[RMDB]
RNA sequence: GGGAACGACUCGAGUAGAGUCGAAAAGGGAGAGAAAGUACCAUGAUAGCUGGGGGAAUCGGCGAGGCCCGGAAGGGAGCAGCCGUGCCUGGACGCCAGCGUUCGCUGGUCAACAGCCAGAGUGAAAUAAAAUAGGCAGUUUCGACUGCCUAUUUUAAAAAGAAACAACAACAACAAC
Reactivity to DMS in 0.01 (KOAc 150mM, MgCl2 10mM, bicine 150mM(pH8.5), 24C), signal-to-noise 9, nucleotides 027 to 126: g010g010g010a060g000a060g010a060a090a090g010u010a100c090c040a080u020g000a100u020a080g020c000u000g000g000g000g000g010a140a110u010c020g010g000c000g000a250g000g000c020c010c020g010g090a130a130g010g000g000a020g020c000a300g000c010c010g010u010g000c190c020u010g010g000a170c300g000c010c000a010g020c000g000u020u030c130g000c020u000g000g000u000c110a070a140c130a070g000c030c020a020g000a100g010u010g000a080a070a140
Reactivity to 2A3 in 0.01 (KOAc 150mM, MgCl2 10mM, bicine 150mM(pH8.5), 24C), signal-to-noise 4, nucleotides 027 to 126: g040g010g000a060g010a020g020a010a100a000g060u090a080c030c040a090u140g040a040u070a050g020c010u010g000g010g000g000g050a070a150u100c020g000g000c000g000a020g030g020c020c000c000g020g030a110a120g020g010g010a040g000c010a000g000c010c010g000u010g000c010c010u020g020g030a020c030g020c020c000a010g000c010g030u090u160c150g000c000u010g000g010u060c060a070a030c010a050g020c000c000a010g030a030g040u110g080a030a060a100